Record summary
An RNA of 177 nucleotides, treated with DMS and 2A3 and read out base by base. High DMS reactivity at an A or C suggests that its Watson-Crick edge is free. 2A3 adducts were read by reverse transcription with SuperScript II with manganese. It was measured as part of the RMDB library OK1LIB. Conditions: 150 mM KOAc, 10 mM MgCl2 and 150 mM bicine (pH 8.5), 24 C.

[RMDB]
RNA sequence: GGGAACGACUCGAGUAGAGUCGAAAAUACGCUGGUAGCAGCAAGUAGCAGCUCCAUCCGCAGAUGAGCGGAAUAUACAGAUGACAAUGGAUCUCGAUAGAGUUGCUACAAUCGAGACCAUUAGAGAGACUACCAUUAUCUUCGGAUAAUGGUAGUCAAAAGAAACAACAACAACAAC
Reactivity to DMS in 0.01 (KOAc 150mM, MgCl2 10mM, bicine 150mM(pH8.5), 24C), signal-to-noise 4, nucleotides 027 to 126: u050a060c140g040c000u000g000g000u030a100g040c010a010g010c000a220a150g000u020a040g000c010a010g000c010u000c030c300a220u000c000c010g020c000a160g010a230u050g040a130g000c020g020g020a030a100u020a050u010a120c250a110g020a130u010g020a140c180a070a020u010g000g010a100u000c000u000c020g000a040u020a110g000a030g040u000u000g010c010u000a010c040a090a050u000c000g000a000g000a030c010c000a020u000u020a050g000a150g010a170
Reactivity to 2A3 in 0.01 (KOAc 150mM, MgCl2 10mM, bicine 150mM(pH8.5), 24C), signal-to-noise 6, nucleotides 027 to 126: u230a040c060g000c000u020g010g050u160a100g180c020a000g000c020a060a040g040u040a000g000c000a000g010c010u000c040c020a100u010c000c000g000c020a050g090a300u210g040a130g030c010g000g070a000a000u100a010u010a020c090a040g190a140u150g190a130c050a060a000u020g000g130a250u010c000u000c000g000a010u030a100g030a010g020u020u020g010c020u020a010c050a020a030u010c000g000a010g000a010c000c000a030u070u130a040g080a010g000a010